Structure probing data (2A3 and DMS) for a 177-nucleotide construct. Conditions: 150 mM KOAc, 10 mM MgCl2 and 150 mM bicine (pH 8.5), 24 C.

[RMDB]
RNA sequence: GGGAACGACUCGAGUAGAGUCGAAAAGAGGCGCAGCCCUUGGCUUGUUUAACCUUUUGUCACAGCAUCUAUACCAGGGAAUGCUGCAUGUGUGCAGUACCAAGAAAACAUUGCUAUUCUAUAAGAAGUAGAGCCAAUGAUUCGUCAUUGGCUCUACAAAAGAAACAACAACAACAAC
Reactivity to 2A3 in 0.01 (KOAc 150mM, MgCl2 10mM, bicine 150mM(pH8.5), 24C), signal-to-noise 2, nucleotides 027 to 126: g090a040g030g000c100g000c030a060g060c030c000c000u000u030g000g030c000u010u060g080u030u090u060a070a100c000c000u000u040u050u220g160u030c010a010c000a030g000c000a180u040c010u080a050u070a100c030c000a030g000g060g020a090a060u120g000c050u000g000c030a070u110g050u030g050u080g060c000a010g000u070a120c050c030a000a000g020a000a110a000a000c020a070u050u090g040c030u090a070u110u070c010u030a060u020a300a200g160a120a010
Reactivity to DMS in 0.01 (KOAc 150mM, MgCl2 10mM, bicine 150mM(pH8.5), 24C), signal-to-noise 3, nucleotides 027 to 126: g000a040g030g000c050g020c070a050g010c000c020c080u000u010g000g000c000u000u000g000u020u040u010a130a140c010c040u000u000u040u030g000u010c090a050c050a040g020c030a010u000c050u000a150u040a150c120c060a130g030g000g090a210a060u010g030c010u000g010c040a100u010g000u000g030u030g000c000a010g000u000a060c040c080a090a090g000a110a100a060a050c120a070u010u030g000c060u020a130u050u010c010u000a130u030a110a140g000a090a180